[RMDB]
RNA sequence: GGGAACGACUCGAGUAGAGUCGAAAAUGAAAGACUAGGAAACUCGAAUAAAUAAGUGGUAAUCCUAGCGAAUCCUCGGCGAGGAAACUAGGACACUAACCAUGUGAUCCCGGACGCUAGAAAAAAAGGUGUGAAUAGGAUUCGUCCUAUUCACACCAAAAGAAACAACAACAACAAC
Reactivity to 2A3 in 0.01 (KOAc 150mM, MgCl2 10mM, bicine 150mM(pH8.5), 24C), signal-to-noise 1, nucleotides 027 to 126: u220g050a030a080a020g040a080c010u030a050g100g000a050a150a000c030u060c020g020a090a110u220a210a070a060u130a130a080g010u080g160g010u020a040a050u000c010c000u000a020g010c010g000a020a020u000c000c030u030c030g180g100c100g070a020g000g070a040a060a070c040u030a000g000g030a000c000a000c060u020a080a040c020c000a010u070g030u030g110a150u020c020c000c000g010g030a010c000g040c050u160a130g140a140a030a000a000a000a000a050
Reactivity to DMS in 0.01 (KOAc 150mM, MgCl2 10mM, bicine 150mM(pH8.5), 24C), signal-to-noise 1, nucleotides 027 to 126: u000g000a160a110a200g010a080c010u000a090g010g010a090a130a040c050u000c010g010a080a240u010a020a090a090u010a110a150g000u000g000g010u000a060a140u000c000c000u010a000g000c010g010a080a070u000c040c000u000c040g050g010c120g050a030g030g000a000a090a090c000u000a010g000g000a070c070a000c150u000a030a110c220c120a030u000g000u010g000a080u000c000c000c010g000g010a110c020g000c040u010a090g020a020a000a020a050a020a070a120
This 177-nucleotide RNA was probed chemically with 2A3 and DMS. For 2A3, 749 sequencing reads were counted. Values cover nucleotides 27 to 126. The reactions ran in a buffer of 150 mM KOAc, 10 mM MgCl2 and 150 mM bicine (pH 8.5), at 24 C. DMS adducts were read by reverse transcription with MarathonRT.